RNA sequence: GGGAACGACUCGAGUAGAGUCGAAAAGAUAUGGAAGCACACAGCUUUUGACGAGGGUUCGGAAACGAACCUCGAUAAGCUGGUGCUUCCUAAGUCAAACUGAUUAUGCCUUCGGGCAUAAUCAGAAGACGAUAGAAUUGUUCGCAAUUCUAUCGUCAAAAGAAACAACAACAACAAC
Reactivity to DMS in 0.01 (KOAc 150mM, MgCl2 10mM, bicine 150mM(pH8.5), 24C), signal-to-noise 5, nucleotides 027 to 126: g000a020u000a250u010g000g010a010a000g000c000a010c000a110c010a000g010c000u010u010u000u000g010a210c080g000a030g010g000g010u000u000c000g010g000a070a030a100c000g000a010a040c000c000u000c010g010a060u000a020a030g020c010u000g000g000u000g000c000u000u000c000c000u000a000a040g010u000c020a130a130a230c010u000g000a010u000u000a010u000g000c000c000u000u010c260g030g010g010c000a000u000a000a000u000c000a010g000a100a090
Reactivity to 2A3 in 0.01 (KOAc 150mM, MgCl2 10mM, bicine 150mM(pH8.5), 24C), signal-to-noise 6, nucleotides 027 to 126: g000a000u030a020u080g000g000a000a000g000c000a000c020a000c010a040g020c020u100u210u270u260g130a060c020g010a060g060g230g050u080u010c000g010g000a030a040a000c010g010a000a000c000c000u000c000g010a030u040a080a040g000c000u000g010g000u000g000c000u000u000c000c000u000a000a000g000u000c030a040a030a110c000u000g000a000u000u010a000u000g000c030c010u050u090c300g030g000g000c000a000u000a000a000u000c000a000g000a020a040
Structure probing data (DMS and 2A3) for a 177-nucleotide construct. The RNA was probed in 150 mM KOAc, 10 mM MgCl2 and 150 mM bicine (pH 8.5) at 24 C. The DMS profile rests on 9,400 reads.